[RMDB]
RNA sequence: GGGAACGACUCGAGUAGAGUCGAAAAUAUUGACUGUAUCUUUGGGAAUCAGUUUGAUAUAGUCGUCAAUGUAUUCUAAAACUUGUGAUCUAGUGGGGUAUUUCUUAGAAUUGGCAGGGAAUGCCACCGGGUAUCCUAUAUUCGUAUAGGAUACCCGAAAAGAAACAACAACAACAAC
Reactivity to 2A3 in 0.01 (KOAc 150mM, MgCl2 10mM, bicine 150mM(pH8.5), 24C), signal-to-noise 4, nucleotides 027 to 126: u230a030u030u150g000a000c000u000g030u060a020u000c040u030u090u050g120g000g180a110a120u300c010a090g110u050u090u100g010a000u000a000u000a030g030u030c000g030u040c030a040a060u100g020u100a140u100u020c020u110a000a030a030a170c050u040u080g030u060g100a060u040c040u050a020g050u040g010g040g020g010u070a080u030u100u000c040u080u100a060g060a220a170u120u070g080g020c040a010g060g040g090a080a040u020g000c000c000a010c000
Reactivity to DMS in 0.01 (KOAc 150mM, MgCl2 10mM, bicine 150mM(pH8.5), 24C), signal-to-noise 3, nucleotides 027 to 126: u020a030u000u020g000a020c000u010g010u000a010u010c000u010u040u030g000g040g010a190a200u030c020a060g000u040u020u010g000a000u000a010u020a030g000u000c020g010u010c170a030a050u020g030u030a060u020u020c020u000a050a070a070a050c080u000u010g010u010g000a090u000c010u000a040g010u010g010g000g000g020u010a040u000u000u000c010u010u010a090g000a110a080u030u020g020g000c060a050g020g000g000a050a070u010g010c000c010a030c300